RNA sequence: GGGAACGACUCGAGUAGAGUCGAAAAUUGGGAAUGUAAUGUUCUUAACCUAUUCUCAAACUUUAAAUAUGUAAGACGUACUUGUUUCUUAAUUGAACUUGUACAUGAAUAAAAGUCUUUAGUGGGCUACCCCCAGUUAUUUCGAUAACUGGGGGUAAAAAGAAACAACAACAACAAC
Reactivity to 2A3 in 0.01 (KOAc 150mM, MgCl2 10mM, bicine 150mM(pH8.5), 24C), signal-to-noise 1, nucleotides 027 to 126: u030u000g000g000g030a010a000u000g050u300a140a050u200g190u300u000c070u000u040a070a000c080c000u080a100u020u000c010u020c000a000a070a000c000u300u180u270a020a170a140u300a180u160g110u100a030a030g000a080c080g030u000a000c020u000u000g120u060u040u140c030u090u220a220a230u120u160g000a000a000c000u000u000g000u000a000c050a020u030g040a000a000u050a020a020a000a000g000u000c000u090u160u120a030g040u300g060g000g050c170
Reactivity to DMS in 0.01 (KOAc 150mM, MgCl2 10mM, bicine 150mM(pH8.5), 24C), signal-to-noise 2, nucleotides 027 to 126: u000u020g010g000g000a020a020u000g000u060a110a140u050g010u020u000c020u000u020a020a120c070c140u020a160u040u000c020u000c000a100a060a140c100u040u020u040a070a100a190u020a090u010g020u010a090a070g010a080c100g010u000a000c010u020u000g000u020u000u020c010u010u000a100a110u070u020g000a000a020c010u020u000g000u000a000c020a080u030g010a070a050u060a090a050a140a010g000u000c020u000u050u000a080g000u090g010g000g020c080

Conditions: 150 mM KOAc, 10 mM MgCl2 and 150 mM bicine (pH 8.5), 24 C. An RNA of 177 nucleotides, treated with 2A3 and DMS and read out base by base. For DMS the reverse transcriptase was MarathonRT. Values cover nucleotides 27 to 126. 2A3 adducts were read by reverse transcription with SuperScript II with manganese.